[RMDB]
RNA sequence: GGGAACGACUCGAGUAGAGUCGAAAAGGCGCGGUGCGGGUACUCGAACUCAUCGACAGCCGGCCGACGCUGGUUGACGGCACCAAGCCGCUGUCGCCGGAGGCUCGGUUAUCACUGGAGUUCCAGCCAUCCGGGUGGGUUUCGACCCACCCGGAUGAAAAGAAACAACAACAACAAC
Reactivity to 2A3 in 0.01 (KOAc 150mM, MgCl2 10mM, bicine 150mM(pH8.5), 24C), signal-to-noise 3, nucleotides 027 to 126: g040g010c030g000c020g000g040u170g110c000g010g030g050u070a080c030u040c040g030a030a010c030u030c080a130u070c150g040a020c030a040g050c040c030g000g000c000c030g000a030c080g000c060u030g010g010u070u240g050a040c000g000g000c040a040c040c090a080a030g060c020c040g000c020u010g000u020c000g010c020c030g050g010a040g030g010c100u120c110g030g020u070u100a070u140c010a010c110u080g060g010a040g020u040u020c000c000a010g030c040
Reactivity to DMS in 0.01 (KOAc 150mM, MgCl2 10mM, bicine 150mM(pH8.5), 24C), signal-to-noise 1, nucleotides 027 to 126: g000g010c000g010c050g040g000u010g000c120g000g000g000u000a060c150u020c040g000a110a020c050u030c060a050u010c120g030a070c040a060g040c000c050g040g000c060c060g000a160c190g070c070u000g000g000u000u090g000a060c000g000g000c000a160c060c090a280a210g000c090c030g000c000u020g010u000c000g040c070c040g010g000a070g010g040c050u020c010g010g000u000u000a050u000c060a230c060u030g000g000a070g000u000u000c010c120a050g040c160